[RMDB]
RNA sequence: GGGAACGACUCGAGUAGAGUCGAAAAGUUUACGCUCCAAGAUCGGUGGAUAGCAGCCCUAUCAAUAUCUAGGAGAACUGUGCUAUGUUUAGAGGAUUAGGUAGUCUCUAAACAGAACAAUUUACCUCAUACGUUAGGACGUUCGCGUCCUAACGAAUCCAGGGUGUCUGUUCGCAGACACCCUGGAAAAAGAAACAACAACAACAAC
Reactivity to 2A3 in 0.01 (KOAc 150mM, MgCl2 10mM, bicine 150mM(pH8.5), 24C), signal-to-noise 2, nucleotides 027 to 156: g000u040u070u140a060c070g030c010u000c000c030a090a000g040a020u110c190g070g200u130g060g050a060u020a030g040c130a060g020c040c020c000u020a030u000c020a030a070u010a010u180c100u070a140g020g000a000g060a030a050c040u080g040u040g100c000u070a010u090g000u000u000u000a000g000a000g040g000a040u030u020a010g030g000u010a000g010u000c000u010c000u000a000a000a000c000a000g020a070a020c060a020a020u180u160u160a010c000c010u120c060a080u160a130c010g020u010u000a000g020g030a030c020g010u050u050c260g030c000g080u010c000c000u000a000a000c000g000a000a000

This 207-nucleotide RNA was probed chemically with 2A3. The reactions ran in a buffer of 150 mM KOAc, 10 mM MgCl2 and 150 mM bicine (pH 8.5), at 24 C. Reactivities are given for positions 27 through 156.